[RMDB]
Annotation
Chemical mapping of a 207-nucleotide RNA with 2A3. The reactions ran in a buffer of 150 mM KOAc, 10 mM MgCl2 and 150 mM bicine (pH 8.5), at 24 C. The 2A3 profile rests on 517 reads. The data come from the RNA Mapping Database (RMDB), library M2RFPK.

RNA sequence: GGGAACGACUCGAGUAGAGUCGAAAAGAAGGGUGAAAGCCCUUGAUACUGUAGUGGAAAUUAUAAAUAAGACGAGUUCUGAGUUGCUUAAGCAGAACUAAAAUAAAAAGACAAGCAUUAUUACAAACAUGGCGAGGUAAGUUCGCUUACCUCGCAAGCCUUCUCUCAUGUUCGCAUGAGAGAAGGCAAAAGAAACAACAACAACAAC
Reactivity to 2A3 in 0.01 (KOAc 150mM, MgCl2 10mM, bicine 150mM(pH8.5), 24C), signal-to-noise 1, nucleotides 027 to 156: g040a010a010g060g050g020u070g010a120a000a020g040c000c000c000u000u000g010a010u090a090c100u040g030u100a000g060u010g010g070a040a030a020u120u070a140u180a250a090a030u230a050a110g050a050c010g030a070g080u000u000c000u020g000a000g040u040u000g060c000u040u010a050a050g000c000a000g000a000a000c020u020a000a040a000a070u090a000a130a000a020a000g020a000c030a020a020g000c010a000u010u040a050u050u120a250c180a040a130a000c020a030u090g010g000c000g000a000g020g010u000a010a010g000u010u150c140g010c090u000u000a000c000c000u000c000g000c000a000a000